[RMDB]
About this RNA: The record gives the reactivity of an RNA of 177 nucleotides to DMS and 2A3. Reactivities are given for positions 27 through 126.
RNA sequence: GGGAACGACUCGAGUAGAGUCGAAAAGGCAUUUGAUUUAAACUUAGAGGCAUGUGAUAUUGAUGUUACUGCCUUCAUGACUGCACCCCCAUUCUGAUUUCAUAAUGGAAUGUUAUCUUGAGACCAGAAAAAUGUAAGAGUUCGCUCUUACAUUUUUAAAAGAAACAACAACAACAAC
Reactivity to DMS in 0.01 (KOAc 150mM, MgCl2 10mM, bicine 150mM(pH8.5), 24C), signal-to-noise 6, nucleotides 027 to 126: g010g010c030a030u000u010u010g010a130u010u010u010a060a100a190c110u010u000a090g010a030g000g010c000a010u010g020u000g010a030u000a140u010u020g010a170u010g010u000u010a020c010u000g000c010c010u000u000c080a040u000g000a100c090u000g010c060a180c040c030c000c020c030a150u000u000c020u000g000a070u000u000u000c030a060u010a040a040u000g010g010a080a070u000g010u000u000a060u000c130u000u000g010a040g000a070c050c030a060g010
Reactivity to 2A3 in 0.01 (KOAc 150mM, MgCl2 10mM, bicine 150mM(pH8.5), 24C), signal-to-noise 4, nucleotides 027 to 126: g030g000c020a010u020u080u180g140a110u130u190u280a120a150a040c060u060u100a030g000a000g050g000c010a030u230g000u000g040a010u030a070u160u230g160a170u270g000u040u030a000c000u000g000c000c000u000u020c020a030u050g050a030c020u050g010c010a070c000c010c000c030c000a010u040u000c020u000g110a110u050u120u080c050a050u070a170a020u080g070g050a110a030u080g010u080u060a070u050c040u010u030g050a060g030a050c020c010a010g080
Record summary:
For 2A3 the reverse transcriptase was SuperScript II with manganese.